[RMDB]
RNA sequence: GGGAACGACUCGAGUAGAGUCGAAAAUUUUGAGCUUUCGAGCUCAAAACAACUGGUGUCCCGACCAGGAUAAACAGAUUUACACGAAGUGAAAGAUCGAAAGGGCCACCAUGUUCGCAUGGUGGAACAUACCGAACAUCUUCGGAUGUUCGGUAUGAAAAGAAACAACAACAACAAC
Reactivity to DMS in 0.01 (KOAc 150mM, MgCl2 10mM, bicine 150mM(pH8.5), 24C), signal-to-noise 4, nucleotides 027 to 126: u000u000u000u000g010a000g000c000u010u000u010c190g010a040g010c000u000c000a000a000a030a050c250a130a120c000u000g010g000u000g010u000c000c000c000g000a140c000c000a030g010g010a140u010a050a060a090c190a100g000a040u010u000u000a270c050a060c020g000a110a100g020u000g000a030a110a140g020a020u000c020g010a070a100a080g010g000g010c010c000a010c000c000a010u000g000u000u000c170g010c010a000u000g000g010u000g000g000a030a040
Reactivity to 2A3 in 0.01 (KOAc 150mM, MgCl2 10mM, bicine 150mM(pH8.5), 24C), signal-to-noise 4, nucleotides 027 to 126: u010u020u010u010g000a000g010c000u060u050u170c270g090a000g000c000u000c000a000a000a000a020c020a030a110c010u010g000g020u020g050u030c020c000c000g010a000c010c000a010g080g000a090u170a050a120a020c080a060g060a030u050u090u170a030c070a010c150g240a300a050g010u030g070a100a080a040g040a030u030c040g060a130a040a050g070g020g010c000c000a000c000c000a000u000g010u020u030c100g000c130a000u010g000g020u010g000g000a010a000